[RMDB]
RNA sequence: GGGAACGACUCGAGUAGAGUCGAAAAGCGCUUCUUCUUCGAUUCGGAUCGGCUCAUCUCGACAAGAGGCGGCGGUCCUCAGUGCUCUUACUCUUUGUUUGUAAAGAGGAGACUGCUGGACUCGCCGAUAGUGCCGUCUUCGGACGGCACAAAAGAAACAACAACAACAAC
Reactivity to DMS in 0.01 (KOAc 150mM, MgCl2 10mM, bicine 150mM(pH8.5), 24C), signal-to-noise 2, nucleotides 027 to 129: g000c240g040c020u000u030c010u000u000c000u050u020c010g020a130u020u010c080g040g050a130u030c000g010g040c030u010c010a000u000c040u130c060g000a050c260a030a060g050a030g000g020c130g040g080c030g070g010u020c000c000u040c040a040g030u010g040c060u000c020u040u090a300c010u020c110u000u000u030g020u000u060u080g040u000a090a020a000g040a000g010g000a020g000a020c010u000g000c180u040g020g000a040c010u030c040g030c030c010g010a060u030a020
Reactivity to 2A3 in 0.01 (KOAc 150mM, MgCl2 10mM, bicine 150mM(pH8.5), 24C), signal-to-noise 5, nucleotides 027 to 129: g070c060g020c030u060u040c000u130u020c000u040u070c070g040a050u020u060c040g030g070a040u000c000g010g000c000u030c010a060u020c010u000c000g030a010c060a070a030g040a010g130g000c020g020g000c000g010g000u000c000c000u010c000a010g000u070g170c000u000c000u080u110a160c000u010c000u030u080u070g270u140u180u250g210u300a010a010a010g000a000g000g000a000g010a000c000u000g010c050u000g010g000a000c050u030c180g000c000c010g000a000u020a000
Structure probing data (DMS and 2A3) for a 170-nucleotide construct.
Values cover nucleotides 27 to 129.
Conditions: 150 mM KOAc, 10 mM MgCl2 and 150 mM bicine (pH 8.5), 24 C.
It was measured as part of the RMDB library 15KLIB.